An RNA of 177 nucleotides, treated with 2A3 and DMS and read out base by base. The data come from the RNA Mapping Database (RMDB), library OK1LIB. Conditions: 150 mM KOAc, 10 mM MgCl2 and 150 mM bicine (pH 8.5), 24 C.

RNA sequence: GGGAACGACUCGAGUAGAGUCGAAAAACUGGAAGCGGCAAAGGAUGACCAACUGGAAUAGUGGUGUACGUUUCGAGGAAAAUCAACUGACCAUCCAGUUGUAAAGAACGUGCUGAUGGCGGGAGCACCCAUUUAUCGAUUUCGAUCGAUAAAUGGGAAAAGAAACAACAACAACAAC
Reactivity to 2A3 in 0.01 (KOAc 150mM, MgCl2 10mM, bicine 150mM(pH8.5), 24C), signal-to-noise 7, nucleotides 027 to 126: a020c030u030g040g030a070a020g040c020g030g000c030a040a050a140g120g040a080u070g070a060c020c030a010a060c020u050g040g060a090a090u090a140g080u040g060g020u060g040u090a050c060g020u030u040u140c090g020a120g010g140a070a090a020a140u090c030a010a050c030u040g050a090c020c000a020u080c020c000a020g000u010u000g010u050a030a060a010g060a040a020c040g040u050g000c030u030g020a100u050g040g010c020g020g030g010a030g000c020a020
Reactivity to DMS in 0.01 (KOAc 150mM, MgCl2 10mM, bicine 150mM(pH8.5), 24C), signal-to-noise 5, nucleotides 027 to 126: a090c040u020g000g010a060a050g020c080g020g020c060a030a130a080g000g010a070u020g000a140c250c040a040a040c060u000g010g000a120a070u010a100g020u020g000g000u000g010u020a030c080g010u000u010u010c130g020a060g010g020a110a040a070a090u010c030a030a020c010u010g000a080c030c060a050u000c040c000a020g010u010u010g000u020a050a110a070g000a060a070c100g000u010g010c040u010g000a040u010g010g020c050g010g010g010a110g010c220a200